Source: RMDB library OK3TST, as collected in RNAgym. The record gives the reactivity of an RNA of 207 nucleotides to 2A3 and DMS. High 2A3 reactivity points to a flexible backbone, as in loops and unpaired stretches. The RNA was probed in 150 mM KOAc, 10 mM MgCl2 and 150 mM bicine (pH 8.5) at 24 C. The 2A3 profile rests on 1,264 reads.

RNA sequence: GGGAACGACUCGAGUAGAGUCGAAAAUUGCGGCAGCCAAAUGCCGAGUCUGGUUCUGGUUGGACACAGGAGUCCGAAUCGUCUGUGGUGGAUAGCAUCCUCGAUGGUGACGCACAGACUGUGUUCGAAAAUAAGGACCUCGUGGACUCGAGUACGACGCUAGCAGUAUUUUCGAAUACUGCUAGCGAAAAGAAACAACAACAACAAC
Reactivity to 2A3 in 0.01 (KOAc 150mM, MgCl2 10mM, bicine 150mM(pH8.5), 24C), signal-to-noise 2, nucleotides 027 to 156: u170u160g050c030g030g000c000a030g050c090c150a150a090a070u060g000c020c000g000a000g020u090c120u150g000g000u000u010c000u020g020g010u000u030g000g000a000c000a000c000a050g010g030a030g030u000c050c020g070a050a060u050c020g020u000c090u130g110u130g090g040u020g000g110a290u110a150g070c030a020u040c000c000u040c020g030a050u050g000g060u080g040a070c000g000c050a020c030a050g200a090c030u000g000u000g000u000u000c040g020a010a090a010a120u220a030a040g010g000a020c000c000u010c060g080u200g010g040a030c010u000c000g000a030g000u030a040c090g100a010
Reactivity to DMS in 0.01 (KOAc 150mM, MgCl2 10mM, bicine 150mM(pH8.5), 24C), signal-to-noise 2, nucleotides 027 to 156: u000u040g010c050g030g030c000a100g020c000c120a150a200a260u010g030c000c010g050a010g000u020c020u010g080g050u010u000c000u010g000g130u060u000g000g010a070c010a050c060a010g000g000a300g020u010c020c020g000a040a070u010c020g000u000c020u050g030u020g010g040u000g040g010a060u000a140g000c000a300u000c000c000u020c030g030a060u000g020g010u000g020a050c020g050c100a100c040a050g000a130c000u040g050u000g000u000u000c010g000a040a060a090a050u000a070a100g070g000a070c000c010u000c050g050u000g010g000a050c010u030c000g050a140g010u000a110c000g030a210